[RMDB]
RNA sequence: GGGAACGACUCGAGUAGAGUCGAAAAUAGUAUCUAGUUCUGAGAUUUAUGUUGGCGAUUAAAAAUAUGAAUUUUUUGCGCAUAAUAGAGUCAUAACGAGUAGAAUACGACUUUUGCGUCGAUUCACAUCACUAGGAAAAAAUGAUGCCGAUGGUGCUGAAGGUUAUCUUUUCGAAGAUAACCUUCAAAAAGAAACAACAACAACAAC
Reactivity to DMS in 0.01 (KOAc 150mM, MgCl2 10mM, bicine 150mM(pH8.5), 24C), signal-to-noise 2, nucleotides 027 to 156: u010a070g000u000a080u000c020u000a090g040u000u000c050u020g010a130g010a090u000u000u000a020u000g020u020u000g020g010c000g020a070u000u000a000a070a040a040a050u000a170u010g000a080a020u000u000u000u000u000u000g020c010g000c000a030u000a050a130u010a090g000a050g000u000c030a040u010a090a140c090g000a080g020u000a080g010a070a070u010a070c000g000a060c030u000u000u000u000g030c060g020u010c090g010a080u000u010c040a100c000a030u000c000a080c040u000a130g020g040a010a040a080a090a080a030u010g010a050u000g000c010c020g010a080u000g010g010u000g000c010
Reactivity to 2A3 in 0.01 (KOAc 150mM, MgCl2 10mM, bicine 150mM(pH8.5), 24C), signal-to-noise 2, nucleotides 027 to 156: u050a000g030u000a010u020c020u010a020g000u060u030c010u060g120a060g010a200u030u060u110a060u080g070u120u080g110g010c010g010a030u050u160a070a050a000a000a050u260a200u220g150a190a120u010u040u030u000u090u080g000c000g010c020a020u090a070a000u030a050g070a000g040u040c050a030u070a130a000c070g000a000g020u030a010g120a060a050u140a120c030g020a000c020u080u070u090u290g090c070g000u000c010g030a050u000u040c030a030c030a000u050c010a020c090u090a100g090g000a150a020a020a000a000a000u120g010a060u120g010c030c030g040a010u000g020g030u020g000c030
This 207-nucleotide RNA was probed chemically with DMS and 2A3. The RNA was probed in 150 mM KOAc, 10 mM MgCl2 and 150 mM bicine (pH 8.5) at 24 C. DMS adducts were read by reverse transcription with MarathonRT. Source: RMDB library OK3TST, as collected in RNAgym. Reactivities are given for positions 27 through 156. For 2A3, 855 sequencing reads were counted.